About this RNA: The record gives the reactivity of an RNA of 177 nucleotides to 2A3 and DMS. For DMS the reverse transcriptase was MarathonRT. The reactions ran in a buffer of 150 mM KOAc, 10 mM MgCl2 and 150 mM bicine (pH 8.5), at 24 C. For 2A3 the reverse transcriptase was SuperScript II with manganese. Reactivities are given for positions 27 through 126.
[RMDB]
RNA sequence: GGGAACGACUCGAGUAGAGUCGAAAAGAUAUGGACGAUGGGAGAACAAGCUCUACCCACCUUAGUGGACAAUCGGAAACGAUUGUCCACUAAGAGGAGCCUGUUCAUCGAUCAUCGUCCUAAGUCACCAUAACAUGUACUUCGGUACAUGUUAUGGAAAAGAAACAACAACAACAAC
Reactivity to 2A3 in 0.01 (KOAc 150mM, MgCl2 10mM, bicine 150mM(pH8.5), 24C), signal-to-noise 2, nucleotides 027 to 126: g070a100u300a150u270g000g010a010c000g010a020u020g030g050g030a070g000a000a010c000a020a020g000c000u050c020u060a260c050c030c010a020c010c020u010u000a010g010u000g000g020a000c020a000a020u000c030g060g050a090a000a040c010g010a000u000u010g000u020c000c010a000c010u010a000a000g000a000g000g010a000g020c000c010u010g020u000u010c040a150u300c020g040a070u100c010a010u000c010g010u020c000c000u010a020a000g050u000c040a050
Reactivity to DMS in 0.01 (KOAc 150mM, MgCl2 10mM, bicine 150mM(pH8.5), 24C), signal-to-noise 3, nucleotides 027 to 126: g030a140u020a240u010g010g010a010c010g010a020u000g000g010g000a080g020a020a020c010a030a040g020c020u000c000u000a140c010c020c020a300c170c000u000u000a010g020u000g020g000a030c000a010a010u000c020g000g000a120a090a260c010g010a020u010u000g020u000c010c000a000c000u000a010a000g010a130g000g000a030g000c000c030u000g030u000u000c000a150u000c170g000a090u010c010a030u000c000g010u000c000c000u000a030a070g010u010c220a170